[RMDB]
RNA sequence: GGGAACGACUCGAGUAGAGUCGAAAAAGUGAGUGAAAUGCCAGCUCCCUGUACAGUUACUAGAGCUCCUGGGAAUGCAUGGCCAGUGACACAAGUGAGAAUUGGAUGUUAUGACCGUCCAGAAAAGUUAGUCACCAAGUUUCGACUUGGUGACUAAAAAAGAAACAACAACAACAAC
Reactivity to DMS in 0.01 (KOAc 150mM, MgCl2 10mM, bicine 150mM(pH8.5), 24C), signal-to-noise 3, nucleotides 027 to 126: a070g010u010g030a140g020u000g000a050a090a040u010g010c020c010a080g010c010u010c000c010c010u020g030u060a050c300a050g010u000u020a080c110u010a100g010a120g020c030u010c110c030u000g010g020g000a020a090u050g050c040a090u010g010g040c050c050a060g000u010g000a130c020a050c060a130a100g020u010g000a090g030a110a090u030u010g000g010a010u000g010u000u020a060u020g030a100c130c020g030u000c010c000a010g020a010a060a090a090g010
Reactivity to 2A3 in 0.01 (KOAc 150mM, MgCl2 10mM, bicine 150mM(pH8.5), 24C), signal-to-noise 2, nucleotides 027 to 126: a000g190u110g070a030g000u030g050a040a030a120u100g050c000c000a010g000c010u000c000c010c000u000g020u080a070c000a080g050u110u070a150c040u110a140g020a020g080c010u020c070c060u030g000g000g000a040a050u110g000c060a150u020g000g030c010c000a110g000u020g060a050c000a020c020a130a130g010u050g160a110g050a000a240u060u050g000g000a090u010g000u130u080a080u170g010a020c030c000g010u020c040c000a000g060a060a110a050a040g180